This 177-nucleotide RNA was probed chemically with DMS. The reactions ran in a buffer of 150 mM KOAc, 10 mM MgCl2 and 150 mM bicine (pH 8.5), at 24 C.
[RMDB]
RNA sequence: GGGAACGACUCGAGUAGAGUCGAAAAAAAAAGAUAUGGAGCCUCCUACCCACCUCGUGGGGAGGAGGGACUCGGAAACGAGUCCUCCCCACCCUCUUACACGAGAGGGAGGCUCCUAAGUCAAAAACUCUACUGUUUAGUUCGCUAAACAGUAGAGAAAAGAAACAACAACAACAAC
Reactivity to DMS in 0.01 (KOAc 150mM, MgCl2 10mM, bicine 150mM(pH8.5), 24C), signal-to-noise 1, nucleotides 027 to 126: a020a010a060a100a060g020a170u040a230u020g000g000a000g020c020c020u000c000c000u010a190c000c000c050a300c020c010u000c020g070u020g000g020g000g030a020g000g000a160g040g010g010a000c020u000c010g000g000a080a020a080c000g010a020g000u000c000c000u010c010c010c000c000a300c070c000c010u020c000u010u000a110c000a040c020g010a010g000a130g000g000g000a000g000g000c020u000c020c000u010a010a040g000u000c080a080a150a140a080a090